[RMDB]
RNA sequence: GGGAACGACUCGAGUAGAGUCGAAAACGCGAUGGAUACGUCCAUCGCGAAUCCGGCCGAGCCGCGGCCGUUAAACUGUGGCACGGUUGUGCCUAGGUGCAACCCUGCUACUAAUGGCGGUACCCCUGCCCAAGCUACCGUCUACGGACGGUAGCAAAGUAAAUUACCGUUUCGACGGUAAUUUACUAAAAGAAACAACAACAACAAC
Reactivity to 2A3 in 0.01 (KOAc 150mM, MgCl2 10mM, bicine 150mM(pH8.5), 24C), signal-to-noise 2, nucleotides 027 to 156: c010g010c000g000a010u010g020g000a020u040a040c190g130u030c000c000a000u000c000g000c000g010a000a000u050c000c020g000g010c020c000g040a030g010c000c000g030c010g030g000c010c010g000u010u100a040a060a040c080u050g000u010g000g010c000a000c010g000g000u020u010g010u010g020c050c070u110a250g140g020u010g030c010a000a000c000c000c000u000g010c000u000a010c010u060a110a170u140g080g000c010g010g000u120a110c000c000c000c040u050g030c060c020c030a060a010g000c020u000a000c000c000g000u000c010u020a030c160g090g000a000c000g000g010u000a000g000c000a000a000
Conditions: 150 mM KOAc, 10 mM MgCl2 and 150 mM bicine (pH 8.5), 24 C. The record gives the reactivity of an RNA of 207 nucleotides to 2A3. The 2A3 profile rests on 1,963 reads. Reactivities are given for positions 27 through 156.